Structure probing data (DMS and 2A3) for a 177-nucleotide construct.

[RMDB]
RNA sequence: GGGAACGACUCGAGUAGAGUCGAAAAUCGCGCGCCGUCGAGGCGGCCGCGGCCGAGGCCGGCCUGGUCACGUGCGCCUACGUCAAGGACGGCUUCUGGGGCGUGCUCGGCGACGUGCCCGCGGCCGAGCCUCGUAUGUCUUCGGACAUACGAGGCUAAAAGAAACAACAACAACAAC
Reactivity to DMS in 0.01 (KOAc 150mM, MgCl2 10mM, bicine 150mM(pH8.5), 24C), signal-to-noise 5, nucleotides 027 to 126: u010c030g020c020g010c300g020c000c020g010u000c040g010a130g030g010c030g010g000c020c010g010c010g010g020c070c020g000a040g020g010c030c000g010g000c060c020u010g000g010u000c070a020c020g000u000g010c090g020c060c030u000a030c020g010u000c030a150a140g000g000a050c160g000g000c110u000u000c030u010g010g020g010g010c010g010u000g010c130u010c130g010g000c000g010a040c010g000u000g010c050c020c000g000c110g020g010c020c010g010
Reactivity to 2A3 in 0.01 (KOAc 150mM, MgCl2 10mM, bicine 150mM(pH8.5), 24C), signal-to-noise 4, nucleotides 027 to 126: u080c010g000c010g000c040g010c030c000g010u010c030g040a100g140g060c000g000g000c000c000g010c010g030g020c020c020g030a070g040g000c020c020g010g030c020c030u090g030g010u090c030a000c010g070u130g110c050g120c030c020u060a020c010g000u030c030a040a040g030g010a050c060g110g070c020u080u030c040u080g100g000g020g020c010g030u090g030c050u070c110g020g010c010g010a010c010g010u040g010c010c020c000g030c060g030g000c010c010g010
The data come from the RNA Mapping Database (RMDB), library OK2TRN. The reactions ran in a buffer of 150 mM KOAc, 10 mM MgCl2 and 150 mM bicine (pH 8.5), at 24 C. For DMS, 8,427 sequencing reads were counted. Values are in units of 0.01, from 0 to 300, in steps of 10.